[RMDB]
RNA sequence: GGGAACGACUCGAGUAGAGUCGAAAAUUACACUGAGAGCAUUUAGCCUGAUUACUCUUUAAAUCAAAUCAGGCAAUAGAGAGAAACUCGAGAGGUGAAAACCACACAGCAUUCUGAAAUGUAUUUGAAGGCAACGCUACCUUCGGGUAGCGUUGAAGGAUCUAUCUACCUUCGGGUAGAUAGAUCCAAAAGAAACAACAACAACAAC
Reactivity to 2A3 in 0.01 (KOAc 150mM, MgCl2 10mM, bicine 150mM(pH8.5), 24C), signal-to-noise 1, nucleotides 027 to 156: u140u080a050c090a030c130u140g040a000g000a000g070c020a010u000u000u130a080g020c000c000u000g000a000u020u050a060c000u070c010u150u220u100a070a080a000u160c130a030a010a010u010c010a000g000g000c050a000a000u050a000g020a000g020a000g060a080a080a030c020u030c080g040a100g020a040g020g020u010g020a070a040a000a030c000c000a040c000a030c010a050g160c010a060u000u090c020u080g080a060a110a130u140g070u070a160u020u080u230g060a090a040g030g000c010a000a000c000g010c000u000a000c000c000u010u120c080g070g000g020u000a000g000c000g000u000u000g000a000a000